Annotation
Chemical mapping of a 207-nucleotide RNA with 2A3. Source: RMDB library RNAMAK, as collected in RNAgym. Reactivities are rounded to 0.1 and cut off at 0 and 3.
RNA sequence: GGGAACGACUCGAGUAGAGUCGAAAAGGGGUCGUAUUUGGGCUCCGCGAAACGUUAUUGUCAGAGCUGAAGCCUCCACGGCUCUUGGAUUUAUAACGGAGGAGCUAAAUACGACGGAGGCACCCAAAACCCGAUGCGGGUUCGCCCGCAUCGGGAACUAUAGCCUAUUGUUCGCAAUAGGCUAUAGAAAAGAAACAACAACAACAAC
Reactivity to 2A3 in 0.01 (KOAc 150mM, MgCl2 10mM, bicine 150mM(pH8.5), 24C), signal-to-noise 1, nucleotides 027 to 156: g050g010g010g000u000c010g010u030a000u000u010u090g160g070g000c000u020c000c070g010c050g110a150a150a010c000g010u040u010a040u070u110g240u270c090a020g010a010g010c020u020g000a050a040g000c040c010u000c000c020a030c050g000g000c010u010c000u000u100g020g000a040u060u300u260a020u160a030a000c000g000g010a110g050g010a000g000c000u000a010a000a010u000a000c000g000a000c010g000g000a000g000g000c000a010c010c030c000a010a130a060a120c000c000c020g010a010u000g030c000g080g000g050u000u050c270g020c020c000c030g020c000a000u000c000g010g010g010a000a000